This 177-nucleotide RNA was probed chemically with DMS and 2A3. The data come from the RNA Mapping Database (RMDB), library TTRDEL. 2A3 is a SHAPE reagent: it acylates the 2'-hydroxyl of flexible nucleotides of all four kinds. For 2A3 the reverse transcriptase was SuperScript II with manganese. DMS adducts were read by reverse transcription with MarathonRT.
[RMDB]
RNA sequence: GGGAACGACUCGAGUAGAGUCGAAAAGAUAUGGAUUGAGACCCUGUGACUGUGCCGAAGAACUCGGAAACGAGGGAGGCACAGCACACAGCUCAAUCCUAAGUCAAAACCCACCUUCGGGUGGGAAGAUUCCAGCUAAGUUCGCUUAGCUGGAAUCAAAAGAAACAACAACAACAAC
Reactivity to DMS in 0.01 (KOAc 150mM, MgCl2 10mM, bicine 150mM(pH8.5), 24C), signal-to-noise 3, nucleotides 027 to 126: g000a050u000a300u000g010g010a000u000u000g010a020g010a110c090c220c110u000g010u000g000a250c000u000g020u010g010c000c000g000a110a150g000a090a170c020u000c000g000g000a090a050a240c000g020a000g000g000g000a070g010g020c000a000c000a010g020c040a020c010a010c070a030g010c010u000c000a020a000u000c000c000u010a040a040g000u000c000a080a070a080a140c000c000c000a000c000c010u010u020c190g050g000g010u000g000g020g000a030a030
Reactivity to 2A3 in 0.01 (KOAc 150mM, MgCl2 10mM, bicine 150mM(pH8.5), 24C), signal-to-noise 2, nucleotides 027 to 126: g010a010u090a050u150g000g000a000u000u010g030a010g050a060c090c100c150u040g020u000g070a080c000u000g000u000g010c010c030g200a300a060g000a070a020c010u000c010g000g000a110a030a040c010g010a010g030g000g010a030g000g020c010a010c010a010g010c010a010c000a000c000a000g000c000u010c010a000a000u030c000c000u010a090a020g040u000c000a040a010a090a180c010c000c000a000c020c010u050u070c300g130g000g000u020g000g000g000a000a030